[RMDB]
RNA sequence: GGGAACGACUCGAGUAGAGUCGAAAAGAGAUGGAAGUUUCAGAUGGGUAGUGAUAUGUUACUUACAUGUACUUAUCACUAUGUUUGUAUCGUGUUAGUAACAGACCGUCUGUUUUCUUCCAUCGAAGGGUUAUGAUAACUUCGGUUAUCAUAACCCAAAAGAAACAACAACAACAAC
Reactivity to 2A3 in 0.01 (KOAc 150mM, MgCl2 10mM, bicine 150mM(pH8.5), 24C), signal-to-noise 7, nucleotides 027 to 126: g100a000g000a000u010g010g010a000a000g020u000u000u020c000a010g000a010u030g000g030g150u160a170g130u110g250a070u110a070u150g050u040u000a010c000u020u050a020c000a030u090g010u030a010c000u060u100a070u250c080a050c170u160a130u230g050u010u040u030g050u020a060u210c070g000u020g020u040u070a040g000u030a010a010c000a000g030a020c020c000g010u000c010u010g000u000u010u000u060c000u000u000c000c000a000u000c000g000a010a020
Reactivity to DMS in 0.01 (KOAc 150mM, MgCl2 10mM, bicine 150mM(pH8.5), 24C), signal-to-noise 2, nucleotides 027 to 126: g010a300g000a010u000g000g000a020a010g010u000u000u000c040a000g000a000u000g000g000g030u030a040g020u020g010a030u020a040u020g010u000u000a000c000u000u040a040c200a050u000g020u000a010c000u000u000a000u030c030a110c190u040a020u000g010u000u020u000g000u000a040u040c070g010u020g010u010u030a060g010u000a050a040c010a010g000a210c020c000g020u000c020u000g020u010u000u030u000c000u000u000c030c030a010u000c010g000a100a120